[RMDB]
RNA sequence: GGGAACGACUCGAGUAGAGUCGAAAAGAUAUGGAACCCAGCAGACAUGUUCAUCGGAAACGAUGGGACAACAGCUGCGGGUUCCUAAGUCAAAACUAGCAAAAACUCUUCGGAGUUUUUGCUAGAACACUAAGCUAUCGUUCGCGAUAGCUUAGUGAAAAGAAACAACAACAACAAC
Reactivity to DMS in 0.01 (KOAc 150mM, MgCl2 10mM, bicine 150mM(pH8.5), 24C), signal-to-noise 3, nucleotides 027 to 126: g000a030u000a300u010g010g010a010a000c000c000c000a170g050c010a010g000a150c100a140u000g000u000u000c000a040u000c000g040g000a140a060a150c010g010a010u010g010g020g010a020c000a010a050c300a100g000c000u000g000c000g010g010g000u000u000c000c000u000a010a070g000u000c040a070a080a110a180c000u000a000g000c020a020a010a010a000a000c000u000c000u000u000c180g020g000a000g010u000u000u000u010u000g000c000u000a010g000a070a100
Reactivity to 2A3 in 0.01 (KOAc 150mM, MgCl2 10mM, bicine 150mM(pH8.5), 24C), signal-to-noise 2, nucleotides 027 to 126: g000a000u020a000u090g000g000a010a000c000c030c030a050g000c000a000g130a270c060a150u050g010u000u010c010a010u010c020g040g020a020a030a030c010g010a000u060g010g070g120a010c000a110a040c040a080g030c000u030g010c010g030g000g000u000u000c000c000u000a020a000g000u020c020a020a030a100a220c000u010a000g010c000a000a010a000a000a030c010u030c010u130u250c300g130g010a000g000u030u000u010u000u010g000c000u000a000g000a000a010